RNA sequence: GGGAACGACUCGAGUAGAGUCGAAAAGAUAUGGAUCCCACACAGCUUUUGACGGAAAUAUAUCGGAAACGAUAUGAUUCCGAUAAGCUGGUGGGAUCCUAAGUCAAAAGUAGUGUUCGCACUACAACUUAUAUAAUCCCUUCGGGGAUUAUAUAAGAAAAGAAACAACAACAACAAC
Reactivity to 2A3 in 0.01 (KOAc 150mM, MgCl2 10mM, bicine 150mM(pH8.5), 24C), signal-to-noise 2, nucleotides 027 to 126: g010a030u040a030u100g000g000a010u000c000c040c000a020c020a010c000a010g020c040u150u300u300u300g300a110c050g010g040a000a040a010u100a010u000a010u030c000g030g000a070a040a020c010g010a010u000a000u020g050a050u020u000c000c020g060a060u040a140a000g000c000u010g000g020u010g010g000g000a000u000c000c010u000a000a000g010u000c020a000a000a110a170g020u000a000g010u000g060u070u170c300g050c090a000c010u020a000c010a030a010
Reactivity to DMS in 0.01 (KOAc 150mM, MgCl2 10mM, bicine 150mM(pH8.5), 24C), signal-to-noise 4, nucleotides 027 to 126: g010a060u000a300u010g000g000a020u000c000c010c000a020c010a140c010a010g000c000u000u010u020u020g010a280c150g010g010a010a030a130u000a030u000a000u000c000g000g000a150a100a190c010g020a030u000a000u000g000a080u000u000c000c000g000a140u000a010a010g030c000u000g000g050u000g000g000g010a010u000c000c000u000a000a060g000u020c030a060a110a140a140g010u000a010g010u000g020u000u020c290g030c010a030c010u000a010c020a120a190